Conditions: 150 mM KOAc, 10 mM MgCl2 and 150 mM bicine (pH 8.5), 24 C. The record gives the reactivity of an RNA of 177 nucleotides to DMS and 2A3. For DMS the reverse transcriptase was MarathonRT. 2A3 adducts were read by reverse transcription with SuperScript II with manganese. For 2A3, 12,362 sequencing reads were counted.
RNA sequence: GGGAACGACUCGAGUAGAGUCGAAAAUCGGCUAUCAAACGCUGAGUAGCGCUUAUUCGCAUGUAUAUUCCUUAACACAUACGCUUAUUCACAGCCGAGAGCUCAGCAAGGGUGUUGACUAGUCAACACCCGGUGUCCUUUUCGAAGGACACCGGGUAAAAGAAACAACAACAACAAC
Reactivity to DMS in 0.01 (KOAc 150mM, MgCl2 10mM, bicine 150mM(pH8.5), 24C), signal-to-noise 9, nucleotides 027 to 126: u010c060g010g010c020u000a100u010c120a060a060a070c110g010c020u000g010a080g020u000a070g010c080g020c100u000u000a070u010u000c040g020c050a030u000g010u000a070u000a130u010u000c070c050u000u010a100a100c160a020c040a020u000a040c050g010c120u000u010a050u010u010c140a090c160a050g010c020c020g010a090g000a100g000c020u000c020a040g010c060a120a090g010g010g010u000g010u000u000g000a040c130u010a130g010u000c010a030a040c080
Reactivity to 2A3 in 0.01 (KOAc 150mM, MgCl2 10mM, bicine 150mM(pH8.5), 24C), signal-to-noise 8, nucleotides 027 to 126: u050c010g000g000c010u050a030u140c080a090a020a050c070g000c030u010g020a000g040u060a030g020c070g020c080u110u120a070u120u100c040g000c070a050u060g060u040a080u010a050u210u130c050c010u060u130a110a020c050a000c010a100u080a070c030g020c020u090u070a060u150u160c070a060c050a110g000c000c020g090a100g010a020g070c010u010c020a010g020c050a080a120g200g010g020u140g060u050u010g010a040c060u040a030g070u030c010a040a010c010